[RMDB]
This 177-nucleotide RNA was probed chemically with 2A3 and DMS. For DMS, 20,706 sequencing reads were counted. 2A3 adducts were read by reverse transcription with SuperScript II with manganese. For 2A3, 23,366 sequencing reads were counted.
RNA sequence: GGGAACGACUCGAGUAGAGUCGAAAAGCGGAUUAUUAACGAACCUACCGCCGCUGCAUUGGCUUAUGGGAUCGACAAGUCUAACCGAGAAAUGAAAGUCUUGGUGUACGACCUUGGUGGUGGUACCGGAAAUACAAUUAUUCGUAAUUGUAUUUCCAAAAGAAACAACAACAACAAC
Reactivity to 2A3 in 0.01 (KOAc 150mM, MgCl2 10mM, bicine 150mM(pH8.5), 24C), signal-to-noise 9, nucleotides 027 to 126: g040c020g000g040a090u090u090a080u140u180a300a050c050g020a030a050c010c000u020a020c020c010g020c000c010g010c020u050g000c040a110u080u230g080g000c010u080u050a110u240g060g010g080a140u110c040g060a050c040a080a010g030u000c030u050a020a020c010c010g010a010g040a020a060a040u300g070a130a070a040g030u010c000u010u010g030g020u030g020u020a050c050g010a030c030c010u040u090g050g010u030g020g010u020g010g000u020a050c020c060
Reactivity to DMS in 0.01 (KOAc 150mM, MgCl2 10mM, bicine 150mM(pH8.5), 24C), signal-to-noise 9, nucleotides 027 to 126: g010c030g000g000a140u010u000a100u010u010a100a150c080g000a110a100c040c030u000a060c050c050g020c010c020g010c040u000g010c110a110u010u010g010g000c050u000u010a080u010g010g010g010a070u000c060g000a110c140a060a100g000u000c060u010a120a040c000c000g010a010g010a020a040a060u000g010a120a110a170g000u000c010u000u000g000g010u000g010u000a070c130g000a050c040c050u000u000g010g020u000g020g030u000g000g010u000a050c160c120